[RMDB]
RNA sequence: GGGAACGACUCGAGUAGAGUCGAAAAAGAGAAGGGGGACUCCGGGACUCCUUGCAUGUUGGGGACGAAGCCGCCCCCGGGCGCUCCCCUCGAUCCACCUUCGAGGGGGUUCACACCUCCAACCUGCUGACUGGCACGUUCGCGUGCCAGAAAAGAAACAACAACAACAAC
Reactivity to DMS in 0.01 (KOAc 150mM, MgCl2 10mM, bicine 150mM(pH8.5), 24C), signal-to-noise 2, nucleotides 027 to 129: a080g020a020g000a070a020g080g040g000g030g050a030c030u000c080c120g010g040g060a100c060u020c010c040u030u050g010c000a030u000g020u050u000g000g000g050g160a050c060g020a090a110g030c140c030g020c050c000c030c080c130g000g020g040c040g030c150u000c000c000c000c000u000c000g000a020u000c090c160a000c200c070u010u020c010g000a020g010g020g030g060g020u020u090c140a100c300a080c050c010u000c000c010a050a040c040c020u010g010c010u010g020a050